RNA sequence: GGGAACGACUCGAGUAGAGUCGAAAAUAAGGUCUGCAAAUACACAGAUUUACAGUGCAUUGAAAGCUUGAAUGUACUUUUUGAUGGUCGUGAUAAUGGUGCUCUUGAAGCUUUUAAGAAGUGCCGGUCUCACUAUUCACUUCGGUGAAUAGUGAGAAAAAGAAACAACAACAACAAC
Reactivity to 2A3 in 0.01 (KOAc 150mM, MgCl2 10mM, bicine 150mM(pH8.5), 24C), signal-to-noise 1, nucleotides 027 to 126: u060a040a030g030g020u000c020u010g060c070a000a000a230u280a090c090a010c000a060g050a000u040u070u080a040c020a030g000u000g050c050a000u030u070g090a190a050a020g070c070u070u260g020a020a030u000g080u020a000c090u020u050u030u030u070g170a150u140g000g040u070c040g040u050g110a020u090a240a020u160g010g000u000g000c000u000c020u000u010g080a030a030g080c020u070u080u020u020a000a060g000a100a010g000u000g010c060c050g030g000
Reactivity to DMS in 0.01 (KOAc 150mM, MgCl2 10mM, bicine 150mM(pH8.5), 24C), signal-to-noise 2, nucleotides 027 to 126: u010a160a110g010g000u020c020u000g000c060a060a090a110u010a110c160a100c070a070g010a080u020u000u010a100c190a040g030u000g010c000a040u000u000g010a020a070a030g010c170u000u000g010a010a010u010g040u000a030c000u010u000u000u010u010g000a080u000g030g020u000c060g010u010g000a070u000a070a060u000g010g000u000g000c010u000c060u000u000g010a050a120g010c160u000u000u000u000a030a040g020a050a160g040u010g000c010c020g020g000
An RNA of 177 nucleotides, treated with 2A3 and DMS and read out base by base.
It was measured as part of the RMDB library OK2TRN.
The reactions ran in a buffer of 150 mM KOAc, 10 mM MgCl2 and 150 mM bicine (pH 8.5), at 24 C.
For DMS, 1,526 sequencing reads were counted.
2A3 adducts were read by reverse transcription with SuperScript II with manganese.